Source information:
This 177-nucleotide RNA was probed chemically with DMS and 2A3.

RNA sequence: GGGAACGACUCGAGUAGAGUCGAAAAGCACAAUCGUGCCUCUACGUAGCCACGGCGCGUCCGUUUGAAGGGGAAUUCGACGCUGACUUUCGUUCUCGGAUUGCAACACAUAUCGAGCGACGACCUACUCCCUAGCUGUGUUCGCACAGCUAGGGAGAAAAGAAACAACAACAACAAC
Reactivity to DMS in 0.01 (KOAc 150mM, MgCl2 10mM, bicine 150mM(pH8.5), 24C), signal-to-noise 2, nucleotides 027 to 126: g030c030a120c070a130a100u010c150g030u000g000c080c040u000c050u000a110c080g040u000a060g020c110c090a050c110g000g000c060g020c160g020u010c020c060g000u000u000u000g020a150a040g010g000g000g000a060a240u000u000c040g010a060c050g010c090u010g010a100c060u000u020u000c010g030u000u010c000u010c030g000g040a120u000u000g020c100a070a050c090a190c150a030u000a070u000c000g010a080g010c050g000a100c030g000a050c020c050u030a230
Reactivity to 2A3 in 0.01 (KOAc 150mM, MgCl2 10mM, bicine 150mM(pH8.5), 24C), signal-to-noise 2, nucleotides 027 to 126: g000c010a020c070a110a300u070c070g000u030g040c000c000u000c020u030a070c050g090u090a040g080c070c040a030c000g010g020c060g030c050g120u100c090c030g050u050u060u190g100a110a030g070g020g000g030a040a130u130u020c010g020a030c050g030c110u010g080a080c030u120u120u020c040g030u080u010c020u020c000g030g020a100u080u100g000c000a060a010c000a030c000a140u020a080u160c060g010a000g030c040g040a050c000g030a020c000c000u030a070
Conditions: 150 mM KOAc, 10 mM MgCl2 and 150 mM bicine (pH 8.5), 24 C. For 2A3, 1,804 sequencing reads were counted. DMS adducts were read by reverse transcription with MarathonRT. Source: RMDB library OK2TRN, as collected in RNAgym.